[RMDB]
RNA sequence: GGGAACGACUCGAGUAGAGUCGAAAAUAGAAAGUGUUUCCAGGGAUCCCAGCAAUGAGAAUCCUAAACUUGAAGACCUCUGCUUCAUCUUACAAGAAGAGUACCACUUAAACCCAGAGACAAUAACUAAUUACUGUUUUUUCGAAAACAGUAAUUAAAAAGAAACAACAACAACAAC
Reactivity to DMS in 0.01 (KOAc 150mM, MgCl2 10mM, bicine 150mM(pH8.5), 24C), signal-to-noise 5, nucleotides 027 to 126: u010a080g000a180a060a060g010u000g010u000u010u000c020c050a130g010g000g000a040u000c010c000c010a030g000c260a070a080u010g010a050g000a090a080u000c020c010u000a050a080a100c070u010u000g010a080a100g010a090c120c060u000c060u010g000c030u010u010c050a100u000c030u000u000a080c120a050a080g000a080a070g010a090g020u000a050c100c020a040c050u000u000a040a090a100c030c010c010a120g000a080g010a040c080a050a060u010a040a100c160
Reactivity to 2A3 in 0.01 (KOAc 150mM, MgCl2 10mM, bicine 150mM(pH8.5), 24C), signal-to-noise 3, nucleotides 027 to 126: u130a010g070a010a090a030g020u020g010u040u100u000c010c020a010g050g010g000a020u010c070c000c010a020g000c020a030a090u080g000a040g040a160a100u000c000c000u070a150a120a090c030u040u060g030a020a010g030a050c000c050u090c060u090g060c050u090u060c020a070u000c010u050u080a080c030a050a040g040a040a000g020a040g020u020a040c020c020a060c050u040u070a050a050a060c010c020c010a010g040a010g010a080c030a060a070u120a130a050c030
Structure probing data (DMS and 2A3) for a 177-nucleotide construct.
It was measured as part of the RMDB library OK2TRN.
Reactivities are given for positions 27 through 126.
For DMS the reverse transcriptase was MarathonRT.
The RNA was probed in 150 mM KOAc, 10 mM MgCl2 and 150 mM bicine (pH 8.5) at 24 C.